[RMDB]
RNA sequence: GGGAACGACUCGAGUAGAGUCGAAAAAUAAAGGGAGGUUUUACCGGGUACAUACUGGGUACCCACAUGAUCACAGGAAUACUGUGAGGAGAUGAACCAUCCUCACCAGUACUAAUGGUACCAUAUAGCAGUAGUCAUAUUUCGAUAUGACUACUGCAAAAGAAACAACAACAACAAC
Reactivity to 2A3 in 0.01 (KOAc 150mM, MgCl2 10mM, bicine 150mM(pH8.5), 24C), signal-to-noise 6, nucleotides 027 to 126: a000u230a000a070a010g040g020g020a080g040g050u030u040u100u150a100c050c040g010g010g010u020a020c030a050u180a100c110u190g190g010g000u000a000c010c050c010a020c010a030u170g020a030u040c000a010c010a040g040g040a110a090u140a220c000u000g000u010g000a000g040g020a110g010a060u190g010a010a010c040c010a220u020c010c010u000c000a040c000c020a020g040u040a040c040u190a060a130u120g080g000u020a070c040c040a040u140a010u120a180
Reactivity to DMS in 0.01 (KOAc 150mM, MgCl2 10mM, bicine 150mM(pH8.5), 24C), signal-to-noise 4, nucleotides 027 to 126: a090u060a040a100a150g000g000g000a040g000g020u000u020u000u040a140c120c080g000g010g000u000a000c010a150u010a060c150u060g000g010g000u010a010c000c010c020a030c150a070u040g010a130u000c040a000c010a040g000g000a160a080u010a080c010u000g020u000g000a010g000g020a100g010a120u030g010a060a050c140c020a040u000c000c000u020c110a050c020c030a010g000u000a050c200u040a180a100u040g000g000u010a110c070c060a100u040a090u060a110
Notes
Source: RMDB library OK1LIB, as collected in RNAgym. Chemical mapping of a 177-nucleotide RNA with 2A3 and DMS. For DMS, 5,067 sequencing reads were counted. For 2A3, 5,758 sequencing reads were counted. The reactions ran in a buffer of 150 mM KOAc, 10 mM MgCl2 and 150 mM bicine (pH 8.5), at 24 C.